[RMDB]
The data come from the RNA Mapping Database (RMDB), library M2RFPK. An RNA of 207 nucleotides, treated with 2A3 and read out base by base.
RNA sequence: GGGAACGACUCGAGUAGAGUCGAAAAGGGGCUGACAGGAAUCGAUAGUAGAGUGUAUCAUGUCAGUAAGCAUGCCGGGGAAUGGUGGUUUACCCCGUUAUCAAAUGAUUACCGACCAAUAAUUGGCUUAGCUCGUUGGGCUUCGGCCCAACGAGAACCAGCGAAGAAAGUUCGCUUUCUUCGCUGGAAAAGAAACAACAACAACAAC
Reactivity to 2A3 in 0.01 (KOAc 150mM, MgCl2 10mM, bicine 150mM(pH8.5), 24C), signal-to-noise 2, nucleotides 027 to 156: g000g010g020g020c030u040g010a010c020a020g040g120a180a090u090c060g020a060u050a040g110u100a060g060a070g080u060g000u040a080u050c030a020u050g010u010c020a010g010u030a000a020g080c050a030u110g040c050c000g000g000g000g000a000a030u030g020g030u010g000g030u010u010u080a050c000c000c000c000g010u050u040a020u050c040a010a010a050u090g030a020u070u050a020c020c030g070a100c040c040a100a020u220a120a080u060u090g070g030c050u090u110a040g040c000u010c000g000u000u000g000g000g000c000u040u020c170g030g000c000c000c000a010a000c010g000a000g000a000a000
The reactions ran in a buffer of 150 mM KOAc, 10 mM MgCl2 and 150 mM bicine (pH 8.5), at 24 C.